An RNA of 177 nucleotides, treated with DMS and read out base by base. It was measured as part of the RMDB library TTRDES. The DMS profile rests on 1,466 reads. DMS adducts were read by reverse transcription with MarathonRT.
RNA sequence: GGGAACGACUCGAGUAGAGUCGAAAAAAAAGAUAUGGACGUAGGGAGAUUGCGUCACCGUUGAAAGUGAUUCGGAAACGAAUCACUGGAGGUGACAGCAAUCGAAGAACUACGUCCUAAGUCAAAAGAUACUCACAGUCUUCGGACUGUGAGUAUCAAAAGAAACAACAACAACAAC
Reactivity to DMS in 0.01 (KOAc 150mM, MgCl2 10mM, bicine 150mM(pH8.5), 24C), signal-to-noise 1, nucleotides 027 to 126: a050a050a050a110g000a050u000a300u010g000g000a030c000g010u000a010g020g000g010a180g000a010u000u010g020c000g010u000c000a000c000c000g010u010u000g010a140a070a000g000u000g010a020u000u000c000g010g020a120a040a280c030g020a030a000u000c010a010c000u000g000g030a050g000g010u000g010a010c000a060g030c000a010a000u010c000g020a100a080g030a190a130c020u010a030c000g000u000c000c000u000a000a050g010u000c070a040a060a100a110